Source information:
This 177-nucleotide RNA was probed chemically with 2A3 and DMS. For 2A3 the reverse transcriptase was SuperScript II with manganese. The reactions ran in a buffer of 150 mM KOAc, 10 mM MgCl2 and 150 mM bicine (pH 8.5), at 24 C. In probing experiments dimethyl sulfate is read out at A N1 and C N3, which are open when not base-paired.
RNA sequence: GGGAACGACUCGAGUAGAGUCGAAAAGCAGUUGACUUCGGUCAACUGCAAAUAAAGCUCAAGACGUGCACAGGGAGGAACGUCUUGAGCAACCCAAUAUAAAAACAUGUAAGUUCGCUUACAUGAAGUUUCAAGUAAACUUCGGUUUACUUGAAACAAAAGAAACAACAACAACAAC
Reactivity to 2A3 in 0.01 (KOAc 150mM, MgCl2 10mM, bicine 150mM(pH8.5), 24C), signal-to-noise 6, nucleotides 027 to 126: g000c010a000g000u010u010g010a020c010u030u100c230g060g010u000c000a000a000c000u000g010c000a010a000a000u010a000a000a000g010c000u000c000a000a000g000a000c000g020u040g030c080a060c110a300g120g110g050a140g050g040a040a000c000g000u000c000u000u000g000a000g000c000a000a000c000c000c000a020a000u140a010u050a030a110a010a010a010c000a000u000g000u010a000a010g010u020u100c220g020c120u000u010a000c000a000u000g010a020a020
Reactivity to DMS in 0.01 (KOAc 150mM, MgCl2 10mM, bicine 150mM(pH8.5), 24C), signal-to-noise 2, nucleotides 027 to 126: g010c000a000g000u010u000g020a040c000u000u010c210g050g000u000c000a000a010c000u000g000c000a000a000a010u000a100a120a100g000c000u000c000a000a000g010a010c000g010u010g010c200a120c070a290g010g010g000a160g010g000a200a000c000g000u000c000u000u000g000a010g000c000a020a010c010c000c000a060a070u030a070u010a060a080a110a140a180c000a000u000g000u000a000a000g020u000u000c280g020c000u000u000a000c000a000u000g000a040a080